[RMDB]
RNA sequence: GGGAACGACUCGAGUAGAGUCGAAAAUAAGCCCAGACUUAUGAGAGAGUGAUGACCUCUCAGCCCCUCCACCUUGGGGUGCCCUAAUCGGAGCACUGCAGUUCCGAUGGAAAGGCUAAGCACGUCGCUCUUAAACGUUCUUCGGAACGUUUAAGAGAAAAGAAACAACAACAACAAC
Reactivity to 2A3 in 0.01 (KOAc 150mM, MgCl2 10mM, bicine 150mM(pH8.5), 24C), signal-to-noise 1, nucleotides 027 to 126: u110a030a040g050c030c010c000a020g030a060c040u070u030a010u040g000a020g000a020g010a020g000u040g030a040u050g030a020c000c000u000c010u000c000a000g010c010c000c000c010u030c050c030a250c040c000u060u080g010g000g000g000u030g000c000c000c010u030a020a010u000c000g020g000a000g000c040a050c180u300g030c080a090g000u000u000c000c000g000a010u030g020g000a090a070a000g020g000c000u010a060a000g030c040a020c170g110u080c040g030
Reactivity to DMS in 0.01 (KOAc 150mM, MgCl2 10mM, bicine 150mM(pH8.5), 24C), signal-to-noise 2, nucleotides 027 to 126: u000a170a190g000c000c000c030a190g000a090c030u000u000a030u000g010a070g010a020g010a040g000u000g030a060u010g000a250c180c000u000c000u000c000a040g000c010c000c010c000u000c260c160a090c180c150u000u010g000g030g030g020u000g000c020c000c020u000a120a010u000c000g000g000a040g020c010a070c240u030g020c190a120g020u000u000c010c000g020a000u010g010g000a070a110a060g000g010c030u000a020a020g000c130a060c150g010u010c030g040